[RMDB]
Source information
The record gives the reactivity of an RNA of 207 nucleotides to 2A3 and DMS. Values cover nucleotides 27 to 156. The 2A3 profile rests on 1,913 reads.
RNA sequence: GGGAACGACUCGAGUAGAGUCGAAAAACCUGCUAGUUAAGAUUUAACCAGAGCAUCCCACUAUCCGGGAUAAUGGAUAGUCCCAGCUCUGAGGGUUAAGAAGGGCUAAACCUGUGAAUGAGUGAAGGGUGAAUAGCCAUUUUGGACAUGGGUUCGAGCAAUCUAAUAUGUUCGCAUAUUAGAUUGCAAAAGAAACAACAACAACAAC
Reactivity to 2A3 in 0.01 (KOAc 150mM, MgCl2 10mM, bicine 150mM(pH8.5), 24C), signal-to-noise 3, nucleotides 027 to 156: a000c030c030u030g010c040u080a070g030u070u040a180a070g030a290u150u110u060a030a020c010c030a010g010a010g110c010a060u060c000c010c010a080c020u010a020u000c010c010g070g050g120a120u140a150a070u240g000g000a000u000a000g000u010c010c010c010a010g000c000u010c010u030g060a070g010g010g010u040u060a030a010g040a020a040g010g000g000c000u010a040a050a000c010c000u030g020u050g160a130a120u110g010a060g090u080g060a040a070g030g030g020u040g040a070a070u060a080g000c010c010a030u090u040u040u150g050g010a020c030a050u070g060g000g000u010u080c060g000a030
Reactivity to DMS in 0.01 (KOAc 150mM, MgCl2 10mM, bicine 150mM(pH8.5), 24C), signal-to-noise 2, nucleotides 027 to 156: a060c010c010u000g040c040u000a070g010u000u010a060a080g000a190u000u000u000a090a040c010c000a030g000a070g000c020a100u020c010c000c010a210c010u000a010u000c030c000g010g000g020a210u020a060a090u000g000g010a040u000a020g000u000c000c010c030a300g000c000u000c000u050g020a110g010g000g010u000u000a030a080g010a090a080g000g000g020c010u010a070a050a050c020c000u010g010u000g010a090a160u000g030a100g020u010g050a130a090g000g010g010u030g020a040a080u000a110g030c010c010a080u000u000u000u000g010g020a090c040a110u000g000g000g000u000u010c030g000a300